Background: An RNA of 207 nucleotides, treated with 2A3 and read out base by base. The reactions ran in a buffer of 150 mM KOAc, 10 mM MgCl2 and 150 mM bicine (pH 8.5), at 24 C. 2A3 adducts were read by reverse transcription with SuperScript II with manganese.
RNA sequence: GGGAACGACUCGAGUAGAGUCGAAAACACUGUCAUCGUGUUUGACAAGGUGCGCGAAAAUACAGCUGGAUAUUUGGGUAAUCGCACUCGCACCUAUGCGGAACACGCAAACCUAGCUGUUAAUCAAACGGUGAUGCGUUCAAUCUCGACGACGAUAAGCUGAAAAUGGGUUCGCCCAUUUUCAGCUAAAAGAAACAACAACAACAAC
Reactivity to 2A3 in 0.01 (KOAc 150mM, MgCl2 10mM, bicine 150mM(pH8.5), 24C), signal-to-noise 1, nucleotides 027 to 156: c070a020c030u050g020u020c010a030u000c050g020u040g080u150u100u060g030a000c000a050a080g000g000u050g080c060g000c020g040a130a000a030a000u130a040c070a030g000c010u030g020g000a030u020a160u300u070u070g000g030g000u080a190a090u070c000g000c000a020c000u070c030g000c000a060c000c000u020a030u050g020c030g110g020a050a080c070a010c110g000c050a010a000a110c020c000u050a060g010c010u000g020u070u060a040a040u030c000a000a000a090c050g030g000u000g020a040u030g040c010g010u030u090c040a190a130u010c020u070c050g110a040c000g060a000c000g010a050u160a210

Source: RMDB library OK3TST, as collected in RNAgym.